[RMDB]
Structure probing data (2A3 and DMS) for a 177-nucleotide construct.

RNA sequence: GGGAACGACUCGAGUAGAGUCGAAAACGCGCGGAUGGAGGCUAAUGCCGAGUAGAAGCGCAUCUUCUAAUAAGCGCAAAAAGAAGAACUACGAGUAGGAAUUAAACUACGACAUCAAAAAGCGCGAGGGAUAUCAAUACUUCGGUAUUGAUAUCCCAAAAGAAACAACAACAACAAC
Reactivity to 2A3 in 0.01 (KOAc 150mM, MgCl2 10mM, bicine 150mM(pH8.5), 24C), signal-to-noise 4, nucleotides 027 to 126: c040g000c020g000c000g050g000a000u010g030g020a000g000g000c000u080a250a040u300g000c000c020g000a020g000u020a000g000a190a040g000c000g000c020a020u000c020u180u000c010u020a010a150u100a240a110g010c020g030c050a030a070a050a070a010g080a110a010g050a130a040c010u020a020c060g010a020g030u000a030g020g130a140a190u150u070a120a080a000c000u000a000c010g020a010c020a000u010c030a040a110a010a020a060g010c030g000c000g010a050
Reactivity to DMS in 0.01 (KOAc 150mM, MgCl2 10mM, bicine 150mM(pH8.5), 24C), signal-to-noise 3, nucleotides 027 to 126: c060g030c030g020c030g040g000a020u000g000g000a300g000g010c020u000a040a190u030g000c010c000g010a240g000u000a020g010a120a120g030c070g000c030a130u010c040u040u000c090u070a120a110u030a150a120g040c070g000c050a120a070a100a090a070g010a150a060g000a110a190c000u000a010c050g000a170g010u000a010g000g000a100a160u040u040a140a030a110c010u000a000c010g000a090c000a020u020c020a020a020a130a120a130g010c020g000c000g000a140
About this RNA:
For 2A3 the reverse transcriptase was SuperScript II with manganese. The reactions ran in a buffer of 150 mM KOAc, 10 mM MgCl2 and 150 mM bicine (pH 8.5), at 24 C. Source: RMDB library OK1LIB, as collected in RNAgym. For DMS, 4,076 sequencing reads were counted.